[RMDB]
RNA sequence: GGGAACGACUCGAGUAGAGUCGAAAAGCUCAAAACAAAAGUAAAUGCGAAUAACAUCGUAAAAUUUGCUCGUAAGGACGCUCUAGUAGCUGCCUAAUUAGCCUCUUACAGGUUCGAGCGUCUUCGGUUUGACUCCGUUAAGGACUGAAGACCAACCCUACUUUUAUUUCUUCGGAAAUAAAAGUAGAAAAGAAACAACAACAACAAC
Reactivity to DMS in 0.01 (KOAc 150mM, MgCl2 10mM, bicine 150mM(pH8.5), 24C), signal-to-noise 2, nucleotides 027 to 156: g000c030u010c030a140a050a070a140c070a080a050a060a130g010u010a020a020a080u000g010c010g020a190a190u010a130a120c140a070u000c020g040u000a160a070a040a110u000u010u010g010c010u000c040g000u000a120a100g030g000a020c040g030c030u000c060u000a110g030u020a010g020c030u000g000c030c010u000a100a130u000u000a090g010c050c020u020c040u010u000a100c160a060g020g020u000u010c090g010a010g020c060g000u000c010u000u000c030g010g000u000u000u010g000a260c060u000c040c140g020u000u000a160a250g060g000a020c020u010g010a050a040g020a070c010c030a070a060c070c010
Reactivity to 2A3 in 0.01 (KOAc 150mM, MgCl2 10mM, bicine 150mM(pH8.5), 24C), signal-to-noise 6, nucleotides 027 to 156: g020c010u020c030a050a060a030a070c050a020a170a040a030g060u070a060a070a060u070g020c010g010a020a020u110a120a040c020a070u030c020g020u080a050a050a090a140u080u100u080g010c010u020c030g070u070a040a050g020g000a010c020g030c000u000c030u060a150g050u140a010g030c030u060g040c030c000u060a090a080u080u130a040g020c010c010u080c050u110u160a090c110a100g020g000u040u080c040g010a010g020c030g000u000c010u010u020c010g000g050u000u020u090g050a050c040u030c080c040g070u110u090a050a040g020g010a020c010u010g020a010a000g010a010c000c010a010a020c020c000
Overview
The data come from the RNA Mapping Database (RMDB), library RSTRND. Structure probing data (DMS and 2A3) for a 207-nucleotide construct.